[RMDB]
RNA sequence: GGGAACGACUCGAGUAGAGUCGAAAACGACCAAUUGGGUCCACUGUCCUUGGGGAACAAACAGGAGCUGUUGUGACGGCGGUCAAGAGUAUCUCUUUCUCACCUCCCUGCUGCGUCUCUACCACUUUGCCCACCCGACCCGGUGUGACCGUUGUCGGUAUUUUACCGUAUUCGUACGGUAAAAUACAAAAGAAACAACAACAACAAC
Reactivity to 2A3 in 0.01 (KOAc 150mM, MgCl2 10mM, bicine 150mM(pH8.5), 24C), signal-to-noise 2, nucleotides 027 to 156: c050g010a020c030c010a070a160u140u140g120g020g000u010c020c020a070c070u050g070u050c020c060u020u060g000g010g000g010a050a040c040a110a050a020c070a130g080g040a070g040c040u010g020u060u030g020u030g000a020c030g010g000c030g000g030u030c060a040a000g030a020g070u110a160u060c080u020c000u080u090u040c020u010c020a090c010c020u000c000c020c010u010g000c020u030g010c010g060u030c010u000c010u060a080c010c010a060c050u100u070u130g030c010c010c000a040c000c010c000g030a050c000c020c010g030g010u090g020u040g020a010c000c020g000u010u030g020u010c050g000
Reactivity to DMS in 0.01 (KOAc 150mM, MgCl2 10mM, bicine 150mM(pH8.5), 24C), signal-to-noise 1, nucleotides 027 to 156: c030g000a260c030c010a090a120u000u000g030g000g000u000c000c060a050c040u000g000u000c030c110u000u000g010g010g050g010a150a120c070a040a060a140c100a110g000g010a120g020c020u000g020u000u000g030u000g000a050c080g010g010c080g000g000u000c020a040a110g000a150g040u000a090u010c030u000c020u010u000u000c030u010c010a080c030c020u000c010c010c000u000g000c020u010g000c020g020u000c010u000c000u000a090c080c060a050c080u000u000u000g020c040c010c010a090c070c020c010g000a090c020c010c030g000g010u000g040u000g010a030c020c030g000u000u010g020u010c000g020